[RMDB]
RNA sequence: GGGAACGACUCGAGUAGAGUCGAAAAGAUAUGGAGUUCGUCUAACGACGAGGAUCUGGACUCGGAAACGAGUCCAGGGAGUCGGUGACGAGACUCCUAAGUCAAAAGCCGUCGUUCGCGACGGCAAGUUAGUUCUAGUGUUCGCACUAGAACUAACAAAAGAAACAACAACAACAAC
Reactivity to DMS in 0.01 (KOAc 150mM, MgCl2 10mM, bicine 150mM(pH8.5), 24C), signal-to-noise 4, nucleotides 027 to 126: g000a040u010a300u010g000g000a020g020u000u010c000g000u000c000u010a170a230c100g010a010c000g000a060g020g000a000u020c000u000g000g010a020c010u000c000g000g000a060a050a130c010g010a020g010u000c000c010a000g000g000g020a010g020u000c000g050g040u010g010a020c000g000a110g010a030c010u000c000c000u000a020a100g000u020c040a110a090a150a180g010c010c000g020u000c000g010u000u020c250g030c010g010a000c000g010g000c010a010a010
Reactivity to 2A3 in 0.01 (KOAc 150mM, MgCl2 10mM, bicine 150mM(pH8.5), 24C), signal-to-noise 4, nucleotides 027 to 126: g020a010u050a020u130g000g000a010g000u010u030c010g010u020c060u210a300a300c190g000a010c030g070a280g040g000a000u000c000u000g000g010a000c000u010c020g000g000a010a030a020c010g000a000g000u000c000c000a010g000g000g000a010g010u010c060g040g170u060g000a000c000g020a030g060a030c000u010c000c000u000a070a000g030u020c030a010a040a100a150g010c000c010g010u020c000g010u040u150c300g000c010g150a000c010g010g020c000a000a000